[RMDB]
RNA sequence: GGGAACGACUCGAGUAGAGUCGAAAAGAUAUGGACAGUAGCAACAGCUGGACGGGUCGGAAACGACCUACCAGACAUGCUAGUCCUAAGUCAAAGCCAGGUCAUCCGUUCGCGGAUGACCUGGCAAGGUUAUCAGAAGGUUCGCCUUCUGAUAACCAAAAGAAACAACAACAACAAC
Reactivity to DMS in 0.01 (KOAc 150mM, MgCl2 10mM, bicine 150mM(pH8.5), 24C), signal-to-noise 2, nucleotides 027 to 126: g010a020u000a300u000g010g000a010c010a140g030u000a020g000c020a040a080c300a190g020c020u000g000g030a160c260g010g000g000u000c010g000g000a090a100a160c020g010a000c000c000u000a050c000c000a000g000a050c110a110u000g000c010u000a080g020u000c000c000u000a010a110g020u010c020a050a120a110g000c010c000a010g000g000u000c000a010u000c000c010g050u000u010c170g000c010g010g010a030u000g000a000c000c040u010g000g040c010a010a010
Reactivity to 2A3 in 0.01 (KOAc 150mM, MgCl2 10mM, bicine 150mM(pH8.5), 24C), signal-to-noise 2, nucleotides 027 to 126: g010a000u080a060u190g020g000a020c080a120g300u100a000g060c020a010a160c090a160g070c040u030g070g120a300c140g100g000g000u010c010g010g000a030a060a060c010g010a000c000c000u000a010c010c000a010g080a070c000a030u060g020c010u020a020g010u000c010c000u030a190a030g040u070c030a070a020a030g000c010c010a010g000g000u020c010a010u000c040c010g110u120u120c300g020c040g190g020a000u050g000a000c010c030u010g000g000c000a000a010